[RMDB]
RNA sequence: GGGAACGACUCGAGUAGAGUCGAAAAGAUAUGGACUGAACGCGCUGCCUAACUAUUCGGAAACGAACGAAUUAGGAACUACAGCUAAGCAGUCCUAAGUCAAAAUCCGUGUCUUCGGACACGGAAACUUUCAAUCUUCCUUCGGGAAGAUUGAAAGAAAAGAAACAACAACAACAAC
Reactivity to 2A3 in 0.01 (KOAc 150mM, MgCl2 10mM, bicine 150mM(pH8.5), 24C), signal-to-noise 1, nucleotides 027 to 126: g020a010u060a060u130g010g010a000c000u010g000a260a020c090g040c030g000c150u040g000c000c000u020a050a020c050u060a130u020u080c000g010g010a060a070a120c040g020a030a010c060g080a280a300u030u000a010g030g090a050a000c090u240a030c270a020g000c030u030a020a020g000c000a000g000u000c000c000u000a100a000g030u010c040a070a000a000a220u040c000c010g000u000g000u000c000u020u060c300g140g000a000c000a010c000g000g000a040a000a030
Reactivity to DMS in 0.01 (KOAc 150mM, MgCl2 10mM, bicine 150mM(pH8.5), 24C), signal-to-noise 1, nucleotides 027 to 126: g020a010u010a300u010g000g000a000c000u000g000a010a030c180g000c190g000c000u000g000c000c020u030a030a020c080u000a260u000u000c000g000g000a120a040a140c110g000a030a010c090g000a060a120u000u000a000g000g030a080a010c110u010a150c060a040g000c030u000a160a140g000c000a030g020u000c000c000u000a020a030g000u000c030a000a050a140a110u020c000c000g000u000g010u000c000u000u020c220g010g000a000c000a000c000g030g050a030a000a040